An RNA of 177 nucleotides, treated with DMS and 2A3 and read out base by base.
RNA sequence: GGGAACGACUCGAGUAGAGUCGAAAAAGAAUUGCUGCUGUUCGAGAGCUUUUCGAAGAAUCUGGAGUGCUUUCGACAAAGAAUGGAUGGCAAACGUCGGCGAAUAAUCCAGAUAUGACGAGUCUGAACCUAAAUCGAGUUUCGACUCGAUUUAGGUAAAAGAAACAACAACAACAAC
Reactivity to DMS in 0.01 (KOAc 150mM, MgCl2 10mM, bicine 150mM(pH8.5), 24C), signal-to-noise 2, nucleotides 027 to 126: a070g000a090a090u010u010g000c000u000g010c040u000g010u000u000c070g000a060g000a040g000c030u000u000u000u000c010g000a110a170g020a100a160u000c060u010g020g010a030g000u010g010c100u000u000u000c030g010a060c080a080a130a110g010a080a040u010g010g010a070u000g010g000c060a050a070a130c180g020u000c030g020g030c080g000a020a110u010a080a080u000c030c020a040g020a050u010a050u000g010a070c070g010a100g010u000c010u000g010a210
Reactivity to 2A3 in 0.01 (KOAc 150mM, MgCl2 10mM, bicine 150mM(pH8.5), 24C), signal-to-noise 2, nucleotides 027 to 126: a000g070a030a040u060u060g000c020u020g010c000u010g050u160u080c090g050a000g010a010g040c000u080u090u050u010c050g050a080a040g060a100a100u050c050u100g010g030a030g060u060g070c050u050u030u060c010g040a030c060a000a120a010g070a040a070u150g040g080a040u110g030g060c020a000a160a030c100g030u040c010g000g040c040g040a080a120u100a060a000u080c000c020a000g020a030u050a090u060g090a010c000g000a000g070u000c000u000g010a050
The data come from the RNA Mapping Database (RMDB), library OK2TST. DMS adducts were read by reverse transcription with MarathonRT. For DMS, 1,820 sequencing reads were counted. The reactions ran in a buffer of 150 mM KOAc, 10 mM MgCl2 and 150 mM bicine (pH 8.5), at 24 C.